The record gives the reactivity of an RNA of 177 nucleotides to DMS and 2A3.
RNA sequence: GGGAACGACUCGAGUAGAGUCGAAAAAGUGGCUUUUCACCGUUUUUUGUGUUAACCUACUAUUCGGUGUGAUUUUAGUCCCACUAAUGUUUAGAAAACCACUUAAGGACAGAUUCGUAUAUUAUACACCUGAGGACUCAUUCGUGAGUCCUCAGGUAAAAGAAACAACAACAACAAC
Reactivity to DMS in 0.01 (KOAc 150mM, MgCl2 10mM, bicine 150mM(pH8.5), 24C), signal-to-noise 1, nucleotides 027 to 126: a070g000u000g050g040c270u000u000u010u000c000a050c040c030g000u020u020u020u050u010u000g010u000g000u000u000a070a110c300c190u090a000c020u070a040u000u000c020g040g010u020g000u000g000a090u000u000u080u000a000g000u010c050c050c030a090c190u000a020a050u020g010u020u000u000a090g000a050a020a020a080c000c040a010c020u000u010a160a030g000g040a030c090a020g000a170u090u080c090g010u000a090u000a010u000u000a050u000a050c230
Reactivity to 2A3 in 0.01 (KOAc 150mM, MgCl2 10mM, bicine 150mM(pH8.5), 24C), signal-to-noise 1, nucleotides 027 to 126: a000g050u020g040g010c100u060u030u020u010c000a010c030c010g030u000u000u000u000u120u040g110u030g080u070u090a070a070c010c000u040a030c070u050a040u020u040c010g000g100u000g000u000g020a060u000u080u040u090a070g010u000c000c000c000a020c010u020a000a110u080g030u090u130u080a070g110a060a020a000a000c010c010a010c000u130u020a040a040g040g040a030c030a050g120a110u010u260c010g040u050a150u000a070u000u240a120u020a080c040
About this RNA
For 2A3, 711 sequencing reads were counted. The reactions ran in a buffer of 150 mM KOAc, 10 mM MgCl2 and 150 mM bicine (pH 8.5), at 24 C. The DMS profile rests on 1,186 reads.